[RMDB]
RNA sequence: GGGAACGACUCGAGUAGAGUCGAAAAUGCAUAUGUUCAUUGUAGCACUAUUCACAAUAGCAAAGACAUGGAAUCAACCUAAAUGUUCAUCAGUGAUAGACUGAAUAAAGAAAAUGUGGUACACAUACACCGUGGAAUACUAUGCAGCCAAAAAAAAGUUUUAUGGCUCAUUCGUGAGCCAUAAAACAAAAGAAACAACAACAACAAC
Reactivity to 2A3 in 0.01 (KOAc 150mM, MgCl2 10mM, bicine 150mM(pH8.5), 24C), signal-to-noise 4, nucleotides 027 to 156: u030g000c020a020u040a010u110g010u000u040c020a040u040u150g040u070a020g100c020a010c040u050a080u100u130c050a040c070a180a170u090a090g050c050a080a090a000g040a050c020a020u040g020g070a070a110u120c040a070a100c020c000u140a160a130a060u090g020u090u080c050a060u010c010a030g010u020g110a240u130a130g080a040c010u020g020a030a050u110a130a150a010g090a010a040a010a020u070g010u020g020g090u050a020c030a000c010a040u140a060c060a020c080c070g030u050g040g050a040a000u020a070c060u010a010u020g030c010a020g040c040c030a120a060a030a010a000a000a000a000
Reactivity to DMS in 0.01 (KOAc 150mM, MgCl2 10mM, bicine 150mM(pH8.5), 24C), signal-to-noise 1, nucleotides 027 to 156: u000g050c050a040u010a040u050g020u000u000c030a140u000u000g050u000a110g000c060a060c050u000a050u000u020c050a040c050a090a110u000a080g010c070a070a130a060g010a140c040a090u000g020g020a300a070u000c090a040a030c000c030u020a110a170a110u000g030u000u000c020a150u000c000a040g010u000g050a140u000a130g020a140c030u000g000a050a080u000a130a010a090g020a020a020a030a080u000g010u010g010g000u000a130c130a110c050a110u000a040c060a090c010c050g000u000g010g010a130a110u000a020c040u000a030u000g000c040a030g040c060c000a000a000a000a100a000a020a090a150
This 207-nucleotide RNA was probed chemically with 2A3 and DMS. Values cover nucleotides 27 to 156.